The record gives the reactivity of an RNA of 207 nucleotides to DMS and 2A3. DMS adducts were read by reverse transcription with MarathonRT. 2A3 adducts were read by reverse transcription with SuperScript II with manganese. Source: RMDB library M2RFPK, as collected in RNAgym. For DMS, 1,845 sequencing reads were counted. For 2A3, 1,920 sequencing reads were counted.

RNA sequence: GGGAACGACUCGAGUAGAGUCGAAAAGGCAAUAACGAACUAAUUCUAAGCAAGUAAUGGAGAAAUGCCAGGGUCACUAUCUAGCUAUAAUAGUGCUUGACAGUAUGAUACUAACUGAACAAUAAGUAAAAGCGCUGGUACUUCGGUACCAGCGCAACAAUGUGUGCUUGUUCGCAAGCACACAUUGAAAAGAAACAACAACAACAAC
Reactivity to DMS in 0.01 (KOAc 150mM, MgCl2 10mM, bicine 150mM(pH8.5), 24C), signal-to-noise 1, nucleotides 027 to 156: g000g050c010a000a110u010a080a060c060g000a090a130c040u000a000a110u000u010c030u000a180a140g000c040a030a160g020u000a070a090u000g000g000a140g030a120a040a090u000g000c000c040a050g030g020g010u000c030a050c020u000a040u020c020u000a090g000c090u000a050u000a090a100u000a130g020u000g050c050u010u010g020a030c030a030g000u000a090u030g030a150u000a080c070u000a040a120c030u000g000a090a050c020a040a040u010a050a160g000u000a040a020a110a130g010c000g090c000u000g000g030u000a020c010u000u000c300g060g040u000a000c000c000a020g000c000g000c000a010a010
Reactivity to 2A3 in 0.01 (KOAc 150mM, MgCl2 10mM, bicine 150mM(pH8.5), 24C), signal-to-noise 3, nucleotides 027 to 156: g020g000c050a030a090u120a150a080c080g050a040a030c050u060a050a130u140u000c020u130a070a020g040c040a010a050g010u120a070a100u120g040g000a080g030a060a110a030u070g020c020c040a030g070g000g000u070c020a000c010u020a050u060c020u090a010g030c020u010a020u020a300a110u060a080g040u040g060c010u020u040g010a030c000a010g030u060a060u060g040a010u020a060c030u030a110a050c020u020g040a050a010c030a100a100u100a140a000g040u030a020a110a020a080g000c000g000c010u010g000g000u010a000c000u020u010c130g030g000u000a000c000c000a010g020c000g000c000a000a000